[RMDB]
An RNA of 177 nucleotides, treated with DMS and read out base by base. For DMS, 3,982 sequencing reads were counted. Source: RMDB library TTRINS, as collected in RNAgym.

RNA sequence: GGGAACGACUCGAGUAGAGUCGAAAAGAUAUGGACGGUGAUGUCGUAUUCGUUUGUCAGUUGCAAGGUUCGGAAACGAACCCUGCAACUUGGAUUUAACGAGAUACGACAUCACCGUCCUAAGUCACCAUUACAUUCGGUUCGCCGAAUGUAAUGGAAAAGAAACAACAACAACAAC
Reactivity to DMS in 0.01 (KOAc 150mM, MgCl2 10mM, bicine 150mM(pH8.5), 24C), signal-to-noise 2, nucleotides 027 to 126: g020a070u000a300u000g000g010a030c000g000g020u010g010a020u000g000u000c000g010u000a010u000u000c000g030u000u000u000g010u000c010a030g010u000u000g020c000a010a050g000g020u000u000c010g020g000a140a140a290c000g040a010a000c000c000c020u020g000c010a000a000c010u010u020g020g000a020u000u010u000a000a010c010g010a050g000a010u000a000c010g010a020c000a010u000c000a000c000c000g010u010c010c000u000a020a070g010u010c050a300